[RMDB]
RNA sequence: GGGAACGACUCGAGUAGAGUCGAAAAAGCAUAGGCUACGGCCUAUGCAAAGGACCCAGUGCUGCUCUGUUGAACUCAAAAGCUGAACCCUGUUGUUGACUUCAACAGGAGCAAGACUGAGCCCUAAAACAAUGACCGAGUUCGCUCGGUCAUUGUUAAAAGAAACAACAACAACAAC
Reactivity to 2A3 in 0.01 (KOAc 150mM, MgCl2 10mM, bicine 150mM(pH8.5), 24C), signal-to-noise 2, nucleotides 027 to 126: a000g010c000a000u000a020g010g000c000u020a010c230g080g000c000c020u020a000u000g000c000a000a000a000g010g010a040c070c000c000a000g000u100g090c040u000g000c000u000c000u040g010u040u020g000a000a000c000u000c020a000a060a080a010g030c000u030g050a130a040c170c050c150u060g040u050u020g030u030u000g080a010c000u000u000c000a000a000c000a080g190g100a000g010c000a000a000g000a000c000u000g000a000g000c000c000c000u260a290a290
Reactivity to DMS in 0.01 (KOAc 150mM, MgCl2 10mM, bicine 150mM(pH8.5), 24C), signal-to-noise 2, nucleotides 027 to 126: a100g000c020a000u000a000g040g000c000u000a200c210g000g000c000c010u020a000u020g000c000a020a090a030g010g000a060c050c010c000a000g000u000g010c020u000g030c020u000c020u000g020u000u000g000a010a060c090u010c050a020a020a050a040g020c020u010g060a080a110c180c210c020u000g000u010u000g000u000u010g000a000c190u010u000c000a000a010c000a020g000g020a030g010c000a000a030g030a080c020u000g010a090g000c030c030c020u020a040a100